This 177-nucleotide RNA was probed chemically with 2A3.

RNA sequence: GGGAACGACUCGAGUAGAGUCGAAAAGCUAUCGCGAAUCGCGGUGGCCGGCAGGGGGCCUGGCGACGUGGACACCUUCUACACUUGUCUUUACCGGUCACUGUUGCACCCCAACACCUUUAACGACCAGCCUGGUCAGUUUCGACUGACCAGGCUGAAAAGAAACAACAACAACAAC
Reactivity to 2A3 in 0.01 (KOAc 150mM, MgCl2 10mM, bicine 150mM(pH8.5), 24C), signal-to-noise 3, nucleotides 027 to 126: g000c010u030a030u100c000g040c040g290a300a140u260c130g000c000g000g030u000g010g000c000c000g000g000c000a050g000g050g000g010g060c000c040u040g030g040c030g010a060c030g050u060g000g010a010c000a070c040c020u080u180c030u150a050c020a050c040u080u220g030u030c000u050u290u100a100c000c020g030g000u010c020a010c030u020g020u040u080g040c070a090c000c020c000c000a040a040c020a080c070c050u170u170u140a060a050c050g040a060c070
It was measured as part of the RMDB library OK1LIB. For 2A3 the reverse transcriptase was SuperScript II with manganese. Reactivities are given for positions 27 through 126.